[RMDB]
RNA sequence: GGGAACGACUCGAGUAGAGUCGAAAAGAUAUGGAUGUACAUUUGGCUGAUCAGACGUUGAAAUCGGAAACGAUGGAGUCUGGCAGCUACCAUACAUCCUAAGUCAAAAGGGGCGUUCGCGCCCCAAGACGCAUAAAGACUUCGGUCUUUAUGCGUCAAAAGAAACAACAACAACAAC
Reactivity to DMS in 0.01 (KOAc 150mM, MgCl2 10mM, bicine 150mM(pH8.5), 24C), signal-to-noise 2, nucleotides 027 to 126: g000a000u020a300u000g010g020a020u000g000u020a010c180a300u000u000u000g010g000c000u020g000a080u000c000a010g000a010c010g000u000u000g000a120a110a000u020c010g030g000a160a060a220c020g020a000u000g010g000a110g050u000c000u020g020g010c000a020g000c010u000a000c300c300a210u000a020c010a000u000c000c000u000a050a110g000u000c040a030a060a070a080g000g040g000g020c000g030u000u000c230g020c000g000c000c010c000c000a000a020
Reactivity to 2A3 in 0.01 (KOAc 150mM, MgCl2 10mM, bicine 150mM(pH8.5), 24C), signal-to-noise 2, nucleotides 027 to 126: g030a030u060a040u200g000g000a000u010g000u050a040c080a200u140u120u300g010g000c010u020g100a300u180c010a000g010a020c010g300u300u050g010a090a040a000u000c000g000g000a040a020a020c000g000a020u000g000g000a020g010u010c000u000g010g010c000a000g000c000u000a030c010c040a000u010a010c000a000u030c000c020u010a170a040g080u060c030a070a000a040a170g000g030g010g010c030g070u120u110c300g020c020g020c140c020c010c000a000a000
This 177-nucleotide RNA was probed chemically with DMS and 2A3.
2A3 adducts were read by reverse transcription with SuperScript II with manganese.
It was measured as part of the RMDB library TTRDEL.
Values cover nucleotides 27 to 126.
The DMS profile rests on 928 reads.